[RMDB]
RNA sequence: GGGAACGACUCGAGUAGAGUCGAAAAGACACAACGUUCGCGUUGUGUCAAAAAGAUAUGGAGUGUUUCAUGGAGAAGGGUGGUCGGAAACGACCACCGCUUCCUUGAAGUGACGGACACUCCUAAGUCAAAAAAGCGUAAGGUUCGCCUUACGCAAGGUGACUACUGUAUUCGUACAGUAGUCACCAAAAGAAACAACAACAACAAC
Reactivity to 2A3 in 0.01 (KOAc 150mM, MgCl2 10mM, bicine 150mM(pH8.5), 24C), signal-to-noise 2, nucleotides 027 to 156: g010a000c000a000c010a010a000c000g030u090u110c250g020c000g130u010u000g010u000g000u000c000a000a010a000a000a000g030a020u030a020u040g010g000a000g000u010g030u010u090u100c010a000u020g080g050a250g020a170a000g030g000g020u000g010g010u010c000g000g000a000a000a000c000g000a000c000c020a000c000c000g000c000u000u010c000c000u040u050g020a050a000g010u020g010a000c090g090g030a010c010a000c010u000c000c000u000a020a000g000u000c020a010a000a000a040a150a040g000c010g000u010a010a000g040g020u010u110c250g130c060c000u010u010a000c000g000c000a010a010
Reactivity to DMS in 0.01 (KOAc 150mM, MgCl2 10mM, bicine 150mM(pH8.5), 24C), signal-to-noise 1, nucleotides 027 to 156: g020a060c000a030c000a020a000c030g010u010u000c270g070c060g000u020u060g000u030g040u040c000a000a020a030a060a230g010a130u000a110u040g020g000a080g090u000g000u000u010u020c000a040u010g030g010a100g010a020a010g010g020g010u010g010g010u000c000g010g020a070a030a140c010g000a040c000c000a020c000c010g060c030u000u000c000c220u000u000g000a250a200g070u020g010a020c230g010g050a060c000a000c000u000c000c000u020a000a080g000u010c010a000a030a020a130a140a260g000c030g020u000a020a050g030g010u000u010c300g020c000c000u000u000a000c020g000c010a000a010